An RNA of 177 nucleotides, treated with DMS and 2A3 and read out base by base. For 2A3, 9,454 sequencing reads were counted. For DMS the reverse transcriptase was MarathonRT. The reactions ran in a buffer of 150 mM KOAc, 10 mM MgCl2 and 150 mM bicine (pH 8.5), at 24 C. The data come from the RNA Mapping Database (RMDB), library M2PK90.

[RMDB]
RNA sequence: GGGAACGACUCGAGUAGAGUCGAAAAGACAAAUGCAGCAUAUUAGGCUAAGCAGGAAAGGGACGGUAGCUCCUGGUGUCAGUUCAUACGGUGUGAUGCAUCUGCGUCGUGCACACAUGCAGCCAAAAUAGUAGAUAAGCUUCGGCUUAUCUACUAUAAAAGAAACAACAACAACAAC
Reactivity to DMS in 0.01 (KOAc 150mM, MgCl2 10mM, bicine 150mM(pH8.5), 24C), signal-to-noise 8, nucleotides 027 to 126: g000a090c080a050a070a090u000g010c030a040g020c040a050u010a110u000u000a090g010g010c020u010a060a090g020c030a050g010g000a060a080a080g010g010g000a050c080g010g000u010a070g020c050u000c020c020u000g010g010u000g010u000c050a050g010u000u000c050a080u010a090c090g000g010u000g010u000g000a110u000g010c010a030u000c060u000g010c110g020u000c110g010u000g020c020a030c040a020c050a030u000g000c030a070g010c050c070a040a060a080
Reactivity to 2A3 in 0.01 (KOAc 150mM, MgCl2 10mM, bicine 150mM(pH8.5), 24C), signal-to-noise 5, nucleotides 027 to 126: g050a020c040a010a090a040u100g000c010a010g020c020a040u080a110u260u190a120g090g000c010u040a050a040g010c010a000g010g060a070a060a030g040g010g030a010c030g060g010u050a020g030c020u010c020c000u030g050g000u020g020u060c060a050g020u060u060c030a030u070a130c070g040g000u020g010u020g040a150u010g000c010a030u000c030u090g040c020g070u110c020g010u040g030c010a000c000a000c000a020u060g050c020a020g040c010c000a040a110a040